[RMDB]
RNA sequence: GGGAACGACUCGAGUAGAGUCGAAAAUCUGGGCGGUUUAGUAUGACCCAUCCAAUGUUCUCCUCCAGGCGGGCAACUACUUUGCCGCUGGCGAACUCCAUCUUCUCGACACGAUACUCGUGGAAGCAUACCGCUAGCAUUUCGAUGCUAGCGGUAUAAAAGAAACAACAACAACAAC
Reactivity to 2A3 in 0.01 (KOAc 150mM, MgCl2 10mM, bicine 150mM(pH8.5), 24C), signal-to-noise 5, nucleotides 027 to 126: u040c030u020g020g000g000c050g000g130u040u090u090a130g120u090a110u260g120a210c010c000c000a020u010c010c010a070a040u110g030u020u010c020u020c000c010u010c000c020a140g300g250c070g010g090g010c070a040a000c030u260a040c020u050u080u050g020c000c000g000c010u000g000g010c030g030a030a020c010u040c060c000a060u000c000u080u010c010u010c010g060a010c000a020c060g130a070u090a110c060u030c030g030u050g020g060a030a000g020c000
Reactivity to DMS in 0.01 (KOAc 150mM, MgCl2 10mM, bicine 150mM(pH8.5), 24C), signal-to-noise 2, nucleotides 027 to 126: u040c040u000g030g000g000c280g000g030u010u000u010a140g010u050a130u080g000a090c050c000c020a050u020c020c010a140a080u020g020u000u000c000u020c000c060u020c040c110a210g000g000c120g000g000g000c010a060a070c300u020a080c130u000u000u010g020c010c000g000c020u000g020g000c180g020a000a120c030u000c020c020a120u040c050u000u000c000u000c030g010a120c050a090c090g050a150u000a050c050u030c000g000u070g010g000a030a130g050c150